[RMDB]
RNA sequence: GGGAACGACUCGAGUAGAGUCGAAAAGAUAUGGAGAAGAGAGCAUGGAGGCGGAUGGGUCGGAAACGACCCAUGCCAUCCAUGAACUACUCUCCUCCUAAGUCAAACUAACUCUUCGGAGUUAGAAGCCUAACAACAAGUUCGCUUGUUGUUAGGCAAAAGAAACAACAACAACAAC
Reactivity to DMS in 0.01 (KOAc 150mM, MgCl2 10mM, bicine 150mM(pH8.5), 24C), signal-to-noise 2, nucleotides 027 to 126: g000a030u000a300u000g010g000a020g000a010a020g010a000g020a080g000c010a000u000g000g000a040g010g050c090g010g000a030u010g010g010g010u000c010g010g010a060a080a220c000g010a010c000c010c000a000u000g000c000c000a130u000c000c010a000u000g010a020a080c010u000a040c010u000c000u020c010c000u000c000c000u010a030a110g000u000c060a050a120a230c010u000a000a000c000u000c000u000u030c230g020g010a040g010u000u000a010g010a140a110
Reactivity to 2A3 in 0.01 (KOAc 150mM, MgCl2 10mM, bicine 150mM(pH8.5), 24C), signal-to-noise 2, nucleotides 027 to 126: g030a020u060a030u160g020g000a000g000a180a020g010a040g000a010g000c020a000u010g020g000a000g000g010c090g050g110a080u020g010g000g010u000c030g050g010a030a050a010c020g000a000c000c000c000a000u010g000c000c000a100u000c000c000a000u010g010a000a000c010u240a190c000u000c010u000c010c000u030c000c000u030a160a000g100u040c040a000a080a160c010u010a000a000c000u000c010u060u080c300g160g000a000g000u000u000a000g020a010a010